The record gives the reactivity of an RNA of 207 nucleotides to 2A3 and DMS. The RNA was probed in 150 mM KOAc, 10 mM MgCl2 and 150 mM bicine (pH 8.5) at 24 C. DMS adducts were read by reverse transcription with MarathonRT.
RNA sequence: GGGAACGACUCGAGUAGAGUCGAAAACAGUCCAGGGACUCUGGGGCGUCGUGGAUGACGUGGCGUCGCCGGUUGGCCACAUAACUGCGGUGCUCUUCCAGCAGCUGCGCGUUCGGGACCUGGACGAGCUCGGGCGGGGUGAGUAUCUCCGAGGAGGACUAUACCCUCACUUCGGUGAGGGUAUAGUAAAAGAAACAACAACAACAAC
Reactivity to 2A3 in 0.01 (KOAc 150mM, MgCl2 10mM, bicine 150mM(pH8.5), 24C), signal-to-noise 2, nucleotides 027 to 156: c040a030g000u000c000c010a010g010g050g100a170c020u050c060u200g030g000g040g000c000g020u140c000g040u070g010g060a120u070g040a080c110g070u040g010g000c000g030u080c050g120c050c020g060g000u040u020g090g010c050c000a080c000a070u250a100a020c010u040g030c030g000g000u030g010c010u040c070u110u030c040c010a030g000c040a010g030c070u100g040c040g010c020g070u130u080c030g000g010g020a010c000c000u010g000g020a000c000g000a000g020c040u050c000g010g080g020c080g000g040g020g000u060g000a110g000u090a100u060c060u000c020c020g020a040g000g040a030g000g000
Reactivity to DMS in 0.01 (KOAc 150mM, MgCl2 10mM, bicine 150mM(pH8.5), 24C), signal-to-noise 1, nucleotides 027 to 156: c050a070g000u010c010c000a070g020g000g000a110c020u000c030u000g020g030g000g020c010g040u000c040g050u020g020g120a110u010g000a100c080g030u000g000g010c020g020u000c070g050c030c060g020g020u000u040g000g010c050c060a070c080a170u000a050a080c070u010g000c000g000g000u010g000c070u000c070u000u000c070c010a120g030c040a100g000c020u000g010c050g010c010g000u000u020c030g010g000g000a140c010c000u000g000g000a020c030g000a120g000c000u010c020g020g000g000c040g040g040g050g040u010g000a120g020u000a070u000c030u010c030c030g000a090g010g000a120g010g000